The data come from the RNA Mapping Database (RMDB), libraries RFM100 and RFMREP. An RNA of 177 nucleotides, treated with 2A3 and DMS and read out base by base.
RNA sequence: GGGAACGACUCGAGUAGAGUCGAAAACGGAUGCCAUAGAUAGAUGGCUACCGCUCUUGGUGCGAGGGAUACGUCCCGCUUGCAGCACGGGAGAGACAGAACCUGGCUUAUAGCAUUUCCUGCUGGAUACCGAAGCUACUUUCGAGUAGCUUCGGUAAAAAGAAACAACAACAACAAC
Reactivity to 2A3 in 0.01 (KOAc 150mM, MgCl2 10mM, bicine 150mM(pH8.5), 24C), signal-to-noise 3, nucleotides 027 to 126: c010g020g040a030u080g000c000c000a020u010a090g080a050u090a050g250a030u120g000g010c000u060a160c020c000g000c000u000c000u010u030g280g000u010g020c010g020a090g010g000g000a010u030a080c230g070u010c000c000c020g000c050u030u060g040c040a020g000c020a000c000g000g040g010a010g000a010g030a030c030a080g050a020a040c000c090u050g080g000c020u110u040a070u090a130g020c010a080u070u040u030c010c010u030g010c010u020g070g000a030
Reactivity to DMS in 0.01 (KOAc 150mM, MgCl2 10mM, bicine 150mM(pH8.5), 24C), signal-to-noise 2, nucleotides 027 to 126: c040g030g000a190u030g020c000c030a000u010a020g040a120u000a130g000a030u000g000g050c040u000a290c080c060g000c000u000c040u000u030g000g100u040g050c000g010a080g000g020g000a070u040a060c250g080u010c020c010c000g040c300u000u110g000c190a030g010c020a070c050g060g000g000a010g010a130g030a070c200a010g000a100a060c070c020u000g000g000c020u000u000a020u000a060g000c070a080u000u030u000c020c060u000g010c010u000g000g000a300

The reactions ran in a buffer of 150 mM KOAc, 10 mM MgCl2 and 150 mM bicine (pH 8.5), at 24 C.